RNA sequence: GGGAACGACUCGAGUAGAGUCGAAAAAGAAUCUCCUUCGGGAGAUUCUGAACCACUAAGCUGAUUGCGGAUGACCACGAGGCAGCUCGUGUCGAGCAACCACCGAGAACAGGUUCGCCUGUUCUAAGGUCAGUAUACGGUUCGCCGUAUACUGACCAAAAGAAACAACAACAACAAC
Reactivity to DMS in 0.01 (KOAc 150mM, MgCl2 10mM, bicine 150mM(pH8.5), 24C), signal-to-noise 4, nucleotides 027 to 126: a010g000a030a000u000c000u000c000c000u000u000c210g030g010g000a000g000a000u000u000c000u000g000a090a220c010c000a130c200u000a100a150g020c130u020g010a040u000u000g000c020g010g010a200u000g000a040c160c110a010c020g020a010g000g010c300a090g000c020u020c010g040u000g020u000c010g000a270g020c020a010a020c020c020a040c120c100g010a050g010a000a000c000a020g000g030u000u000c240g010c000c000u000g010u010u000c010u000a050a040
Reactivity to 2A3 in 0.01 (KOAc 150mM, MgCl2 10mM, bicine 150mM(pH8.5), 24C), signal-to-noise 3, nucleotides 027 to 126: a000g000a000a010u000c010u010c010c000u020u050c170g110g000g000a010g010a000u010u010c000u000g000a000a010c000c010a020c130u120a120a030g010c070u030g030a110u040u040g000c000g080g180a100u210g040a040c080c050a010c070g010a020g050g060c100a160g120c040u020c010g010u010g030u020c020g030a020g010c000a000a030c010c030a030c020c030g140a030g000a040a000c000a000g060g030u030u050c210g070c030c000u000g000u010u010c000u010a040a040
This 177-nucleotide RNA was probed chemically with DMS and 2A3. For DMS the reverse transcriptase was MarathonRT. The 2A3 profile rests on 2,912 reads.